[RMDB]
RNA sequence: GGGAACGACUCGAGUAGAGUCGAAAACUCGCGCGAACAUGGAGGCGUGGAGCGCGACAUGAAUCAGCCUCUAUUAGAUUAAUGGUCGACAGAUCAGCGGCGAUCAGCGACCCAAUUAGAAGCCGCCACCGGAAGAGGAGACGCUCGACGGACGUCACAUUUAGUCAUACUUCGGUAUGACUAAAUGAAAAGAAACAACAACAACAAC
Reactivity to 2A3 in 0.01 (KOAc 150mM, MgCl2 10mM, bicine 150mM(pH8.5), 24C), signal-to-noise 4, nucleotides 027 to 156: c000u010c000g000c010g020c000g070a280a030c020a060u110g030g010a030g030g000c030g050u050g060g040a030g000c010g010c010g030a040c040a140u300g090a080a100u090c040a030g000c000c010u000c020u060a120u090u150a010g100a050u070u110a090a090u150g020g000u010c000g030a060c060a110g010a000u010c020a030g000c010g020g010c020g010a020u000c030a010g010c000g010a010c000c000c020a020a130u120u130a060g060a190a010g000c000c010g020c010c010a040c020c000g030g010a090a070g020a060g060g070a130g040a030c040g040c080u010c030g070a040c030g010g030a120c010g040u040c010a020
Reactivity to DMS in 0.01 (KOAc 150mM, MgCl2 10mM, bicine 150mM(pH8.5), 24C), signal-to-noise 2, nucleotides 027 to 156: c000u000c030g000c000g030c000g000a150a190c090a050u010g020g020a070g000g030c040g020u000g010g020a280g020c060g060c060g000a040c080a090u010g020a110a090u000c000a150g000c000c000u010c010u010a100u020u000a120g000a110u000u000a030a120u010g000g030u000c000g030a100c100a160g000a090u000c050a090g010c050g050g010c010g000a050u000c020a080g020c090g020a060c020c000c040a040a110u000u000a140g030a080a110g040c060c000g000c000c050a170c070c020g000g040a080a130g010a040g000g010a150g010a060c020g020c030u000c010g040a030c050g020g000a040c040g000u000c020a170

An RNA of 207 nucleotides, treated with 2A3 and DMS and read out base by base. Conditions: 150 mM KOAc, 10 mM MgCl2 and 150 mM bicine (pH 8.5), 24 C. Reactivities are given for positions 27 through 156. For 2A3, 1,822 sequencing reads were counted.